[RMDB]
RNA sequence: GGGAACGACUCGAGUAGAGUCGAAAAACAGGCGUGAGCCACUGUGCCCGGCCUAAAACUGUGUUUGAGACAGGGUCUCACUCUGUUGUCCAGGCUGGAGUGAAGUGGCAUGUUCAUGGCUCACUCAGCCUCAGCCUCACUGGGUUCAGGUGAUCCAACUAAAUACUCAGUUCGCUGAGUAUUUAGUAAAAGAAACAACAACAACAAC
Reactivity to 2A3 in 0.01 (KOAc 150mM, MgCl2 10mM, bicine 150mM(pH8.5), 24C), signal-to-noise 2, nucleotides 027 to 156: a000c010a010g080g020c050g050u030g030a030g000c000c000a090c040u050g020u080g080c000c000c000g020g000c000c000u090a120a090a070a060c070u110g030u060g080u230u190u220g080a070g000a020c080a110g150g060g060u000c020u000c020a010c000u000c010u020g070u070u040g070u050c060c020a000g000g020c000u030g020g060a080g040u100g020a150a010g020u040g020g010c020a010u050g030u110u120c070a050u120g050g000c030u010c020a010c020u060c030a010g020c000c000u050c020a000g000c000c030u090c020a070c060u060g040g000g000u050u080c030a060g070g000u050g050a050u040c020c000a010
Reactivity to DMS in 0.01 (KOAc 150mM, MgCl2 10mM, bicine 150mM(pH8.5), 24C), signal-to-noise 3, nucleotides 027 to 156: a080c040a060g010g000c040g010u010g010a080g020c010c010a050c020u000g020u000g010c020c000c000g020g030c000c010u010a040a040a060a070c050u010g000u000g030u000u010u000g000a150g000a050c030a120g030g020g020u010c070u000c030a060c030u000c020u000g020u000u000g010u010c060c100a090g010g020c030u000g010g010a070g020u000g010a100a070g030u010g010g090c010a040u000g000u000u000c100a090u000g030g000c060u000c050a030c030u000c040a250g010c130c000u000c030a090g000c040c000u010c110a150c100u000g010g020g010u000u010c060a140g010g010u000g010a110u010c010c020a150
Structure probing data (2A3 and DMS) for a 207-nucleotide construct. It was measured as part of the RMDB library OK3TST. The reactions ran in a buffer of 150 mM KOAc, 10 mM MgCl2 and 150 mM bicine (pH 8.5), at 24 C.